[RMDB]
RNA sequence: GGGAACGACUCGAGUAGAGUCGAAAAACCAAGUGGAGUCGUUAAAGGUUUAGGAUGGGAUACUGUGUCACUACAUCCCGGAAGUAACAUUGCACGAUGGCUGCCCAUUACAAGGCUGCAGUCUCUAGAGUUGCCUUGGUGGAGACCGAGGUGACUUCCUCCUUGCAUAGUUCGCUAUGCAAGGAGGAAAAGAAACAACAACAACAAC
Reactivity to 2A3 in 0.01 (KOAc 150mM, MgCl2 10mM, bicine 150mM(pH8.5), 24C), signal-to-noise 1, nucleotides 027 to 156: a000c040c030a020a000g080u100g120g040a060g100u050c050g030u080u090a150a050a040g070g000u050u150u210a080g010g090a080u110g010g000g070a060u070a150c170u190g040u020g020u110c060a020c090u130a100c020a050u050c000c000c030g000g020a070a030g020u050a000a080c090a130u070u090g020c090a010c140g120a110u080g000g000c030u010g000c050c000c000a030u030u060a120c100a160a030g010g020c070u150g010c050a020g000u030c000u000c010u040a020g010a020g130u020u020g000c010c000u000u000g030g010u000g030g060a050g030a020c010c030g010a010g000g040u020g000a000c000u000u030
Structure probing data (2A3) for a 207-nucleotide construct.
The data come from the RNA Mapping Database (RMDB), library ARCHII.
The RNA was probed in 150 mM KOAc, 10 mM MgCl2 and 150 mM bicine (pH 8.5) at 24 C.